The record gives the reactivity of an RNA of 177 nucleotides to DMS. The RNA was probed in 150 mM KOAc, 10 mM MgCl2 and 150 mM bicine (pH 8.5) at 24 C. DMS (dimethyl sulfate) methylates the pairing face of unpaired adenines and cytosines.

RNA sequence: GGGAACGACUCGAGUAGAGUCGAAAAGAUAUGGAGCGCGGAGGGAGAAAGUCGGAAACGAUAGUUUCAUCGAUCUCCCGCUCCUAAGUCAAAGAUGCGCUUCCACGUUCGCGUGGAAGCGCAUCAACUUGUUCAAUCAGUUCGCUGAUUGAACAAGAAAAGAAACAACAACAACAAC
Reactivity to DMS in 0.01 (KOAc 150mM, MgCl2 10mM, bicine 150mM(pH8.5), 24C), signal-to-noise 1, nucleotides 027 to 126: g010a050u000a300u020g000g010a020g030c020g040c280g010g010a040g000g000g030a300g020a040a030a160g040u000c090g000g000a090a040a140c000g010a080u010a070g030u000u010u000c100a140u000c030g010a300u040c000u000c000c000c000g000c000u000c010c000u000a010a030g000u010c060a080a170a090g000a020u000g010c000g000c000u000u000c000c010a000c080g030u000u010c250g020c020g000u040g000g000a000a000g000c000g050c000a000u010c000a030a140